[RMDB]
RNA sequence: GGGAACGACUCGAGUAGAGUCGAAAAUCAUCGUUCUUCGGAACGAUGAAGUAUAACGCGGGCUCCGGACACAGGCGUAGCUGGCCUGGGAAAGUCACAGUAUGGGGCAAACUUUCGAGUUUGCCAAUAAAUACUUGGUGUUCGCACCAAGUAUUUAAAAAGAAACAACAACAACAAC
Reactivity to 2A3 in 0.01 (KOAc 150mM, MgCl2 10mM, bicine 150mM(pH8.5), 24C), signal-to-noise 3, nucleotides 027 to 126: u020c000a000u000c000g000u030u000c010u040u040c240g090g000a000a000c000g000a010u000g000a000a000g000u040a090u040a160a060c070g010c050g070g030g000c040u060c040c030g060g010a030c060a000c020a120g060g000c020g050u040a030g070c050u070g040g010c000c000u010g020g010g030a070a150a030g030u030c020a010c000a130g090u110a090u220g140g030g010g000c000a000a000a000c030u090u070u130c210g030a010g000u010u010u010g000c000c000a000a000
Reactivity to DMS in 0.01 (KOAc 150mM, MgCl2 10mM, bicine 150mM(pH8.5), 24C), signal-to-noise 6, nucleotides 027 to 126: u010c000a010u000c000g020u000u000c000u010u010c210g020g010a010a010c000g010a010u000g000a010a080g000u010a080u010a080a090c110g000c060g010g010g010c020u000c030c030g010g000a100c090a110c060a040g000g010c030g010u000a080g020c090u010g000g010c020c020u000g000g010g000a070a060a090g010u000c060a060c100a100g020u000a080u010g010g010g000g010c000a000a000a010c000u000u000u010c160g000a020g010u000u000u000g000c000c010a060a060
Chemical mapping of a 177-nucleotide RNA with 2A3 and DMS.
For DMS, 8,670 sequencing reads were counted.
2A3 adducts were read by reverse transcription with SuperScript II with manganese.
Values are in units of 0.01, from 0 to 300, in steps of 10.